[RMDB]
RNA sequence: GGGAACGACUCGAGUAGAGUCGAAAAGUCGCCGCGUCUACAUCAACGCCCAGCGCGGGCGAGGGAGGCGUCCUACGGGGGUGACCCAUUCGCCGGCAUGGUAGAGGACUGCAAGAUUGCCCCGACGGGACUAGCACUGAUUCGUCAGUGCUAGUCCAAAAGAAACAACAACAACAAC
Reactivity to DMS in 0.01 (KOAc 150mM, MgCl2 10mM, bicine 150mM(pH8.5), 24C), signal-to-noise 2, nucleotides 027 to 126: g020u000c010g010c060c130g000c040g020u010c000u020a120c100a090u010c110a110a150c060g000c050c000c040a080g000c150g070c050g020g020g000c030g030a010g020g070g030a180g030g040c050g030u000c000c020u000a060c220g060g000g000g000g020u010g010a180c010c020c000a090u040u000c000g000c010c010g030g050c040a080u000g000g000u010a120g000a100g000g020a100c100u000g000c040a060a060g000a080u000u000g010c020c030c030c020g030a090c180g010
Reactivity to 2A3 in 0.01 (KOAc 150mM, MgCl2 10mM, bicine 150mM(pH8.5), 24C), signal-to-noise 1, nucleotides 027 to 126: g020u020c020g000c050c000g030c020g020u000c000u110a150c020a170u200c110a160a060c050g000c000c000c020a050g070c240g040c150g180g010g010c010g000a020g050g020g010a290g010g000c020g010u000c010c010u000a130c160g150g010g040g000g070u050g080a120c000c000c020a070u030u040c010g000c030c000g010g020c060a030u040g030g020u060a090g030a080g050g000a020c060u090g000c020a030a070g050a090u120u090g030c000c010c000c040g080a050c100g040